[RMDB]
RNA sequence: GGGAACGACUCGAGUAGAGUCGAAAACAUUCCGAAGGGGACCGUCCCUCGGUAAUGGCGAAUGGGACCCAGAACUCUCUUUAGCUUCCGAAAGAGAAGCAAGAGAAAACUGGCUCUCCCUUAGCCACAUCCAAAUCAUCUUCGGAUGAUUUGGAUGAAAAGAAACAACAACAACAAC
Reactivity to 2A3 in 0.01 (KOAc 150mM, MgCl2 10mM, bicine 150mM(pH8.5), 24C), signal-to-noise 1, nucleotides 027 to 126: c000a060u070u110c010c030g020a110a050g040g010g010g080a140c060c070g260u180c020c000c010u010c040g010g000u090a100a080u040g000g000c000g010a000a000u100g000g010g000a010c030c000c030a020g000a070a050c010u000c000u010c000u060u040u120a010g000c010u020u000c000c010g270a300a200a060g110a000g000a000a010g000c000a010a010g000a010g000a010a020a000a020c000u000g010g010c010u000c000u000c000c000c000u000u020a000g020c010c000a010
Reactivity to DMS in 0.01 (KOAc 150mM, MgCl2 10mM, bicine 150mM(pH8.5), 24C), signal-to-noise 1, nucleotides 027 to 126: c100a180u040u000c000c000g000a180a110g000g000g000g010a300c300c300g030u000c000c000c000u000c040g000g010u010a060a150u000g000g000c030g010a140a030u000g000g000g030a000c140c000c000a030g000a150a300c140u030c000u000c000u000u000u000a060g010c000u000u000c000c000g010a190a030a250g010a120g000a030a000g070c030a010a000g000a020g000a000a000a030a240c000u000g060g000c010u000c000u000c000c000c000u000u000a300g000c030c040a070